[RMDB]
RNA sequence: GGGAACGACUCGAGUAGAGUCGAAAAGAGCGCUGCGUACGGGCCAGCGGCGUGAUCUCGAUGUGGAUGGCCGGACUGUAGGCGGCCAUGAAGGUGUGAAAGAUCAUCAGGGCAUCCGCCACCGUCGUGCAGGGAUUUAUUUCGAUAAAUCCCUGCAAAAAGAAACAACAACAACAAC
Reactivity to DMS in 0.01 (KOAc 150mM, MgCl2 10mM, bicine 150mM(pH8.5), 24C), signal-to-noise 2, nucleotides 027 to 126: g000a120g010c060g000c010u020g000c070g020u050a070c040g010g040g030c020c020a110g020c080g000g000c070g050u000g000a050u040c020u000c030g000a120u030g020u030g030g000a050u000g000g030c030c000g040g000a070c000u020g000u020a100g000g010c000g000g020c080c030a010u000g010a130a100g000g010u000g030u010g010a230a120a170g000a120u030c010a030u000c020a070g000g000g010c150a060u040c060c030g020c000c020a070c030c050g030u020c050g030
Reactivity to 2A3 in 0.01 (KOAc 150mM, MgCl2 10mM, bicine 150mM(pH8.5), 24C), signal-to-noise 3, nucleotides 027 to 126: g030a010g010c030g010c010u020g020c020g020u070a050c050g030g060g010c010c010a010g000c040g020g000c000g040u060g030a040u030c020u020c050g150a200u190g040u090g110g140a080u030g000g030c000c000g020g000a060c010u040g020u050a070g080g000c030g000g000c020c020a000u040g090a070a070g000g000u050g020u010g040a090a020a010g140a020u200c020a010u000c000a030g070g000g020c010a070u020c010c000g040c000c000a000c010c020g030u020c010g000
The record gives the reactivity of an RNA of 177 nucleotides to DMS and 2A3. Conditions: 150 mM KOAc, 10 mM MgCl2 and 150 mM bicine (pH 8.5), 24 C. For 2A3, 1,937 sequencing reads were counted. Reactivities are given for positions 27 through 126. The data come from the RNA Mapping Database (RMDB), library OK1LIB.